This 177-nucleotide RNA was probed chemically with DMS and 2A3. The 2A3 profile rests on 2,403 reads. Source: RMDB library 15KREP, as collected in RNAgym.
RNA sequence: GGGAACGACUCGAGUAGAGUCGAAAACACUCAAUCGUAAUUAUGUUUUUACUGGUUAUCAUAUAACCAAAAAUAGUAAAGUGCAGCUCGGUGAGUACAUUUUCGAGCGCAUUGAUUAUAGUGAUGCCCCUAAAAUUGAGUUCGCUCAAUUUUAGGGAAAAGAAACAACAACAACAAC
Reactivity to DMS in 0.01 (KOAc 150mM, MgCl2 10mM, bicine 150mM(pH8.5), 24C), signal-to-noise 2, nucleotides 027 to 126: c040a060c040u000c210a080a030u000c040g010u000a070a080u010u000a030u030g000u000u000u010u010u010a060c170u010g000g010u000u000a020u000c170a140u030a300u000a000a010c000c010a000a020a020a040a040u020a100g020u000a040a020a080g030u000g010c010a100g000c010u000c020g010g000u000g010a060g030u010a110c100a050u000u000u000u000c010g000a010g000c000g000c010a020u000u000g000a050u000u000a080u000a070g010u000g000a110u000g010c190
Reactivity to 2A3 in 0.01 (KOAc 150mM, MgCl2 10mM, bicine 150mM(pH8.5), 24C), signal-to-noise 2, nucleotides 027 to 126: c020a000c010u020c030a030a020u050c040g060u110a100a040u070u040a070u100g070u060u040u010u010u070a100c080u040g000g020u000u030a020u040c050a020u060a020u020a290a000c000c000a100a000a000a000a000u090a030g020u020a090a030a000g020u020g000c030a040g000c030u000c020g050g000u020g010a050g060u120a100c040a190u050u070u040u070c000g000a000g000c010g010c010a000u010u060g010a000u000u070a070u080a100g030u010g050a050u110g070c020